[RMDB]
RNA sequence: GGGAACGACUCGAGUAGAGUCGAAAAAAUUAGAAAUGCAACAUAUUGGAGCUGCUGUGGACUGAAUGUGUGUGUCCCCCCAAAGUGCACAUGUUAAAUCCUAACCCCCAAAGUGAUGGUCUUUGGGUGGUGAUGAGGUCGUGAGAGUGGAGUCCCACAUGCUAAUUACUUUCGAGUAAUUAGCAUGAAAAGAAACAACAACAACAAC
Reactivity to 2A3 in 0.01 (KOAc 150mM, MgCl2 10mM, bicine 150mM(pH8.5), 24C), signal-to-noise 1, nucleotides 027 to 156: a030a000u300u280a070g070a040a130a040u200g030c060a060a000c050a100u160a120u090u150g070g030a000g040c010u040g010c000u000g020u080g070g060a000c040u050g050a140a020u020g020u000g000u000g030u050g230u300c030c000c000c010c030c030a030a100a000g040u040g010c000a000c000a010u000g000u070u010a030a130a000u000c000c000u000a000a040c000c030c000c000c000a000a000a000g040u080g020a060u080g000g020u000c010u010u020u000g000g010g040u100g020g000u000g000a020u050g000a010g050g000u000c020g030u070g050a000g000a000g110u040g000g000a000g010u010c000c000c000a010
Reactivity to DMS in 0.01 (KOAc 150mM, MgCl2 10mM, bicine 150mM(pH8.5), 24C), signal-to-noise 3, nucleotides 027 to 156: a080a090u010u000a110g010a080a090a060u000g030c020a050a070c040a100u000a120u010u000g020g000a120g040c020u000g040c020u010g010u010g020g020a080c040u000g020a060a030u000g050u000g020u000g010u000g000u000c000c010c010c010c010c030a070a050a080g010u000g010c050a040c010a020u000g000u000u010a050a050a080u000c030c020u010a130a090c000c010c010c000c010a020a050a030g020u000g020a110u000g010g010u000c010u010u000u000g010g010g010u000g020g000u000g020a090u000g000a070g020g030u000c010g010u000g010a130g000a090g010u000g010g010a140g010u000c010c010c020a220
This 207-nucleotide RNA was probed chemically with 2A3 and DMS. For 2A3, 418 sequencing reads were counted. For DMS the reverse transcriptase was MarathonRT. The reactions ran in a buffer of 150 mM KOAc, 10 mM MgCl2 and 150 mM bicine (pH 8.5), at 24 C. The DMS profile rests on 7,794 reads.